[RMDB]
RNA sequence: GGGAACGACUCGAGUAGAGUCGAAAAUGAAUGGCAUGCUGGGCCGGGACAUUUGGGCACAACCGCAUAUUGGCCAGCAGGCCGAUGCCCUCGAUGAAGCUGCUGGCGUGCUCCUUGGGUCCGGUGAUCGUCCCCUCCAAUUCGUUGGAGGGGACGAAAAAGAAACAACAACAACAAC
Reactivity to 2A3 in 0.01 (KOAc 150mM, MgCl2 10mM, bicine 150mM(pH8.5), 24C), signal-to-noise 1, nucleotides 027 to 126: u230g060a060a020u030g010g050c090a010u030g020c010u080g000g000g000c010c000g000g000g000a000c120a170u040u100u110g100g000g000c000a050c000a130a090c060c000g020c130a000u080a200u190u170g130g000c010c010a000g000c000a010g080g150c040c040g020a020u250g020c000c070c000u020c030g100a090u070g060a110a000g020c010u050g000c000u000g030g020c050g000u000g000c000u020c050c030u000u080g170g000g000u050c000c000g010g010u020g000a050
Reactivity to DMS in 0.01 (KOAc 150mM, MgCl2 10mM, bicine 150mM(pH8.5), 24C), signal-to-noise 1, nucleotides 027 to 126: u010g010a130a100u000g000g000c040a090u040g000c050u000g010g000g010c000c000g000g000g010a000c040a020u020u000u000g040g010g000c070a150c100a060a120c190c090g070c160a040u020a080u020u020g000g070c000c020a000g020c000a030g020g040c000c040g000a150u010g000c020c040c000u000c090g000a180u060g040a190a140g030c030u000g000c010u000g010g000c000g010u020g000c060u000c010c080u000u040g000g060g000u000c000c020g000g010u000g000a220
An RNA of 177 nucleotides, treated with 2A3 and DMS and read out base by base. The reactions ran in a buffer of 150 mM KOAc, 10 mM MgCl2 and 150 mM bicine (pH 8.5), at 24 C. For 2A3 the reverse transcriptase was SuperScript II with manganese. For DMS the reverse transcriptase was MarathonRT.